[RMDB]
An RNA of 207 nucleotides, treated with 2A3 and read out base by base. Conditions: 150 mM KOAc, 10 mM MgCl2 and 150 mM bicine (pH 8.5), 24 C. The 2A3 profile rests on 566 reads.
RNA sequence: GGGAACGACUCGAGUAGAGUCGAAAAGAAAGAAAGAAAGCGGUUGGGUGGGUCCAUCGACCGUCGUGGCGUAUUCGGACGCUUUACCACGACGCGAGGAAAUAGCGAGACCGACCACCCCCUUAAACAGAGGUAUAGUAGUUCGCUACUAUACCAAGGUGUUAUCAGAGUUCGCUCUGAUAACACCAAAAGAAACAACAACAACAAC
Reactivity to 2A3 in 0.01 (KOAc 150mM, MgCl2 10mM, bicine 150mM(pH8.5), 24C), signal-to-noise 1, nucleotides 027 to 156: g060a030a020a000g070a070a070a040g030a080a040a060g160c170g060g150u120u130g040g050g020u010g030g010g060u050c000c000a010u050c000g020a040c000c000g010u000c000g000u010g040g000c070g020u070a090u030u210c050g080g030a020c000g070c000u040u090u060a080c080c000a000c030g000a020c000g000c000g020a000g010g020a150a020a000u040a000g060c000g030a080g010a040c010c020g000a000c000c000a000c030c000c000c020c000u020u060a070a050a000c020a040g070a090g120g010u000a000u000a000g000u000a000g030u070u000c160g030c000u000a000c000u000a000u000a000c010c000a000a030